Source: RMDB library TTRDES, as collected in RNAgym. An RNA of 177 nucleotides, treated with DMS and 2A3 and read out base by base.
[RMDB]
RNA sequence: GGGAACGACUCGAGUAGAGUCGAAAAGAUAUGGAUGGAGAGUGCUUUUGACGCACCGGAUGUCGGAAACGACAUGUCGUGCGAUAAGCACCUCCAUCCUAAGUCAAAACCACGCUUCGGCGUGGAAGAAUGAAGCUAAGUUCGCUUAGCUUCAUUCAAAAGAAACAACAACAACAAC
Reactivity to DMS in 0.01 (KOAc 150mM, MgCl2 10mM, bicine 150mM(pH8.5), 24C), signal-to-noise 9, nucleotides 027 to 126: g010a030u010a300u000g000g000a010u000g010g000a010g010a140g030u000g010c000u000u000u010u010g020a290c100g010c000a000c050c110g010g000a010u000g010u000c000g000g010a120a100a200c010g010a010c000a000u000g000u010c300g010u000g010c010g020a140u000a010a010g000c000a010c000c000u000c000c000a000u000c000c000u000a010a070g000u010c040a100a070a120a230c000c000a000c000g020c000u000u010c220g030g010c000g030u000g000g000a040a030
Reactivity to 2A3 in 0.01 (KOAc 150mM, MgCl2 10mM, bicine 150mM(pH8.5), 24C), signal-to-noise 9, nucleotides 027 to 126: g030a010u070a030u150g000g000a000u000g020g010a020g030a060g020u010g010c020u130u120u160u270g290a170c060g020c000a010c020c040g040g040a010u000g000u010c010g030g040a060a070a080c020g040a000c020a010u100g300u250c020g000u000g000c010g050a080u050a190a000g000c010a000c000c000u000c000c000a000u000c000c000u000a000a000g000u000c000a000a000a040a120c010c000a000c000g010c000u110u150c300g190g000c000g000u000g000g000a000a040
For 2A3 the reverse transcriptase was SuperScript II with manganese. Values cover nucleotides 27 to 126. For DMS, 17,882 sequencing reads were counted.